Chemical mapping of a 207-nucleotide RNA with 2A3. It was measured as part of the RMDB library M2RFPK.

[RMDB]
RNA sequence: GGGAACGACUCGAGUAGAGUCGAAAAUACCGUCUUCUCCCCGACGGUUUCAAUCCAUAGCUUCACGUUGUGUAGCGUAGGUGGAGGGUAUCGUGUGGUGUAUAAACACCACAUAGUCUCUUAGGGGUCAAGCUGAUAAACUUCGGUUUAUCAGCAAGGCUGUAUGAAGCUUCGGCUUCAUACAGCCAAAAGAAACAACAACAACAAC
Reactivity to 2A3 in 0.01 (KOAc 150mM, MgCl2 10mM, bicine 150mM(pH8.5), 24C), signal-to-noise 1, nucleotides 027 to 156: u020a000c000c000g040u050c020u100u070c050u120c010c000c000c000g020a000c000g010g020u000u040u060c030a000a000u040c000c020a060u070a110g000c010u030u050c020a020c090g300u300u280g010u070g020u070a010g000c000g100u100a060g000g080u030g000g020a010g000g000g000u090a080u150c050g000u000g000u000g010g020u000g020u000a080u120a230a300a000c000a000c000c000a000c020a000u000a030g030u020c000u000c000u070u220a030g000g000g000g020u040c070a070a020g000c000u000g000a000u000a000a000a000c000u020u060c100g060g000u030u000u000a000u000c000a000g000c000a000a000